Chemical mapping of a 207-nucleotide RNA with DMS. It was measured as part of the RMDB library PDB130.

[RMDB]
RNA sequence: GGGAACGACUCGAGUAGAGUCGAAAAUACUACCAAAGGGCAUGCUUCGGCAUGCCCUUUGGUAGUAGUAAGUGAACGGUGGAGCAACACCGCGUGUUCCCCGCAUACGCGGGCUUAUGGUAGAUAUGGUGUAUAUUCGUAUACACCAUAUCUACCACGCAGAAAUAGUAUUCGUACUAUUUCUGCGAAAAGAAACAACAACAACAAC
Reactivity to DMS in 0.01 (KOAc 150mM, MgCl2 10mM, bicine 150mM(pH8.5), 24C), signal-to-noise 1, nucleotides 027 to 156: u000a010c000u010a020c010c000a000a000a020g020g020g030c020a030u000g000c000u010u000c250g050g030c000a010u010g030c000c000c000u000u000u000g020g020u000a000g000u000a000g000u010a080a100g000u000g000a080a040c020g000g000u000g020g000a170g030c070a080a180c030a050c020c010g000c030g040u000g020u010u000c000c010c010c010g080c110a100u010a050c270g030c020g020g020g030c040u000u010a050u000g020g000u000a000g000a010u000a000u000g000g030u010g010u020a010u000a050u000u010c280g020u000a010u000a020c000a010c000c010a000u010a000u000c000u000a000c000c000a000

The DMS profile rests on 2,862 reads.